[RMDB]
RNA sequence: GGGAACGACUCGAGUAGAGUCGAAAAGAAGAUGCGAUUGGGACGGAACCAGUUUCUGUACGAUGCCUCGCCAGAGGAUGCGGAUGCUUCAUCGGGCUGCUCGGCAGACGAUGAGGCCAACCGCUCAACUAAAUCCUGGUUUCGACCAGGAUUUAGUAAAAGAAACAACAACAACAAC
Reactivity to DMS in 0.01 (KOAc 150mM, MgCl2 10mM, bicine 150mM(pH8.5), 24C), signal-to-noise 5, nucleotides 027 to 126: g010a090a090g000a070u000g010c030g010a060u000u010g020g000g010a070c050g010g000a040a060c040c140a120g010u000u000u000c020u000g010u000a050c080g000a090u000g010c020c030u010c030g010c090c080a160g010a050g010g000a060u010g010c010g000g010a300u000g000c000u000u000c000a010u000c000g000g010g000c000u000g000c010u010c230g030g010c000a010g000a060c010g000a020u000g010a010g000g000c010c160a040a040c010c020g000c000u000c120a100
Reactivity to 2A3 in 0.01 (KOAc 150mM, MgCl2 10mM, bicine 150mM(pH8.5), 24C), signal-to-noise 3, nucleotides 027 to 126: g060a040a020g040a040u080g050c060g070a050u040u100g080g020g120a030c030g030g010a010a030c030c010a020g020u020u030u040c030u030g040u020a040c020g020a030u130g030c000c010u020c020g070c050c020a070g020a060g160g000a040u130g000c000g000g000a010u080g000c000u000u010c000a010u020c000g090g300g090c010u010g000c060u100c200g260g020c010a020g000a000c020g000a000u010g010a000g000g010c000c000a020a020c000c000g000c000u020c020a000